This 177-nucleotide RNA was probed chemically with DMS and 2A3.
DMS adducts were read by reverse transcription with MarathonRT.
The RNA was probed in 150 mM KOAc, 10 mM MgCl2 and 150 mM bicine (pH 8.5) at 24 C.
For DMS, 713 sequencing reads were counted.
For 2A3, 831 sequencing reads were counted.
RNA sequence: GGGAACGACUCGAGUAGAGUCGAAAACGGGUAUCCCCGAUUAAUGCAACCUCAUAUGCUUCAACUUUAGGUUUAUAGUAUUAAGCGAAAGGUUAUACCUAUACUUAUGGGGUUAGGUCAACCCUAACUGAUGCGCAAUUUUCGAAUUGCGCAUCAGAAAAGAAACAACAACAACAAC
Reactivity to DMS in 0.01 (KOAc 150mM, MgCl2 10mM, bicine 150mM(pH8.5), 24C), signal-to-noise 1, nucleotides 027 to 126: c160g020g010g050u000a070u000c080c000c010c020g000a090u000u000a060a030u000g000c070a080a010c010c010u020c210a020u010a110u010g010c090u000u010c260a080a150c050u010u000u010a070g010g010u000u000u000a120u000a060g020u000a060u000u000a020a060g010c030g030a050a180a080g010g010u020u030a010u040a110c060c010u000a090u010a080c130u020u000a110u010g000g000g010g030u000u000a010g010g030u000c140a050a090c060c000c030u000a060a070
Reactivity to 2A3 in 0.01 (KOAc 150mM, MgCl2 10mM, bicine 150mM(pH8.5), 24C), signal-to-noise 1, nucleotides 027 to 126: c020g050g020g010u070a050u120c020c000c010c000g110a070u140u130a130a030u030g000c000a000a050c000c000u020c040a020u020a000u110g110c090u180u160c050a030a070c050u040u120u130a050g060g030u060u120u040a090u030a050g020u000a020u080u040a050a040g000c050g060a170a050a000g090g000u070u070a020u030a050c000c020u070a100u020a200c030u030u100a070u140g080g000g000g000u040u020a030g000g040u100c050a040a030c000c000c000u020a090a030